[RMDB]
Background: An RNA of 177 nucleotides, treated with 2A3 and DMS and read out base by base. The 2A3 profile rests on 1,861 reads. Reactivities are given for positions 27 through 126. 2A3 adducts were read by reverse transcription with SuperScript II with manganese. The DMS profile rests on 1,786 reads. The reactions ran in a buffer of 150 mM KOAc, 10 mM MgCl2 and 150 mM bicine (pH 8.5), at 24 C.

RNA sequence: GGGAACGACUCGAGUAGAGUCGAAAAGAUAUGGACGCAUGUAAGCUCUUGGAUUUAUGGGAAACGUCGACUACUCGGAAACGAGUAGUCGACUAUCCCAUUGUCAGAGCUGAGUGCGUCCUAAGUCCUGUGUGUUUAGGUUCGCCUAAACACACAGAAAAGAAACAACAACAACAAC
Reactivity to 2A3 in 0.01 (KOAc 150mM, MgCl2 10mM, bicine 150mM(pH8.5), 24C), signal-to-noise 1, nucleotides 027 to 126: g030a070u080a040u260g000g000a000c010g040c010a020u030g140u300a020a000g000c010u000c070u190u300g200g050a100u300u300u120a030u060g000g000g000a010a090a040c130g030u000c010g000a000c000u000a010c000u000c010g010g080a270a060a040c000g030a050g060u020a010g010u000c000g010a000c000u000a000u000c000c000c030a000u000u000g000u000c030a010g020a000g000c000u030g000a010g000u000g000c000g000u000c020c000u000a020a010g000u000c000
Reactivity to DMS in 0.01 (KOAc 150mM, MgCl2 10mM, bicine 150mM(pH8.5), 24C), signal-to-noise 2, nucleotides 027 to 126: g000a120u000a220u010g000g000a060c010g030c000a000u000g010u000a300a080g000c010u000c030u020u040g020g050a010u000u000u010a010u000g020g000g000a000a080a200c300g000u000c000g010a030c000u000a000c000u010c020g020g000a150a100a230c000g020a030g020u000a000g000u000c020g040a000c000u000a080u000c000c000c000a000u000u000g000u020c000a050g010a020g000c000u000g000a200g000u000g000c030g000u000c000c000u000a020a120g000u000c030